[RMDB]
RNA sequence: GGGAACGACUCGAGUAGAGUCGAAAAACGGAUGGUACGCCAUCCGACCAUUGGGUAGAAGCGUUCAAUCAGCACCGUGACGGUGCAGAUGGGAAAUUGCCCAUGAUACGCACCAGACGUGGUGCGAAAAAGCCAUCGGUGUUCGCACCGAUGGCAACCCAUUUCAUGCCUUCGGGCAUGAAAUGGGAAAAGAAACAACAACAACAAC
Reactivity to 2A3 in 0.01 (KOAc 150mM, MgCl2 10mM, bicine 150mM(pH8.5), 24C), signal-to-noise 1, nucleotides 027 to 156: a000c000g000g000a000u020g000g000u040a010c170g100c030c000a030u020c000c000g080a010c040c000a120u130u060g010g000g000u060a060g010a210a010g020c060g070u040u090c010a020a100u000c030a030g000c020a000c000c040g120u160g090a180c300g010g000u000g000c060a010g000a010u060g000g000g000a030a030a120u050u030g040c000c000c000a000u010g040a000u000a030c030g000c000a030c030c000a030g040a090c030g220u150g010g000u000g000c020g040a050a000a000a020a000g000c000c000a000u000c030g000g000u020g000u010u150c260g030c100a030c000c000g000a000u000g000g000c000a000a000